Structure probing data (DMS and 2A3) for a 177-nucleotide construct. Conditions: 150 mM KOAc, 10 mM MgCl2 and 150 mM bicine (pH 8.5), 24 C. For DMS, 1,395 sequencing reads were counted.

RNA sequence: GGGAACGACUCGAGUAGAGUCGAAAAAGGUUCAUGUUCACUAAUUAACGAACUAUUAAUGAGAGUUCAAAGACCACCCACUCUCUUGUUAGUGUUUUCACUCUCUCUUUUGGUCACUGCAUCCUCACGUAGGAAUGUGGUUCGCCACAUUCCUACGAAAAGAAACAACAACAACAAC
Reactivity to DMS in 0.01 (KOAc 150mM, MgCl2 10mM, bicine 150mM(pH8.5), 24C), signal-to-noise 2, nucleotides 027 to 126: a130g010g000u000u000c100a130u010g010u010u000c040a080c090u000a070a090u000u010a040a060c130g000a070a010c080u000a180u000u010a050a070u000g000a060g010a020g010u010u000c080a040a040a150g000a060c030c020a140c020c010c040a100c060u010c010u000c030u000u000g010u000u000a030g010u000g010u000u000u000u000c080a030c030u020c040u000c010u000c010u000u000u010u020g020g010u000c040a100c070u020g000c090a070u000c010c000u000c100a150
Reactivity to 2A3 in 0.01 (KOAc 150mM, MgCl2 10mM, bicine 150mM(pH8.5), 24C), signal-to-noise 1, nucleotides 027 to 126: a000g040g000u080u050c050a020u130g060u020u090c040a050c060u090a150a090u210u120a120a030c040g030a040a020c020u070a130u160u150a020a140u180g030a030g020a020g030u080u070c110a000a050a050g030a030c050c020a020c020c000c000a020c000u000c000u010c020u000u080g010u040u040a030g030u000g040u010u110u000u010c040a040c010u060c000u000c000u050c000u070u050u070u190g030g040u040c070a020c060u020g000c000a020u030c010c010u080c010a050